The record gives the reactivity of an RNA of 207 nucleotides to 2A3.
The 2A3 profile rests on 1,266 reads.
The RNA was probed in 150 mM KOAc, 10 mM MgCl2 and 150 mM bicine (pH 8.5) at 24 C.
It was measured as part of the RMDB library VIROID.

RNA sequence: GGGAACGACUCGAGUAGAGUCGAAAAGUUCGUGCGCGGCGACCUGAAGUUGCUUCGGCUUCUUCUAGUUCGCGACCUGCGUGGAACGGCUCCUUCUUCACACCAGCCGGAGAUCGAAACUACCCGGUGGAUACAACUCUUGAGCGCCGAGCUUAACCACACACUUUCGGUUCGCCGAAAGUGUGUGAAAAGAAACAACAACAACAAC
Reactivity to 2A3 in 0.01 (KOAc 150mM, MgCl2 10mM, bicine 150mM(pH8.5), 24C), signal-to-noise 2, nucleotides 027 to 156: g000u020u010c030g080u130g050c000g000c000g030g050c020g020a000c000c010u000g000a010a000g000u010u010g000c010u040u150c220g150g000c030u010u010c010u000u000c020u040a020g000u020u070c000g000c030g000a120c000c010u080g000c000g010u040g020g000a050a010c000g020g000c000u000c000c000u060u100c030u180u140c090a200c050a050c120c050a030g180c030c020g000g070a120g020a180u150c080g140a150a110a070c050u060a110c040c010c020g000g000u000g020g030a060u100a160c170a150a030c080u060c020u110u110g040a050g030c040g000c040c060g020a010g000c020u070u070a030a010c040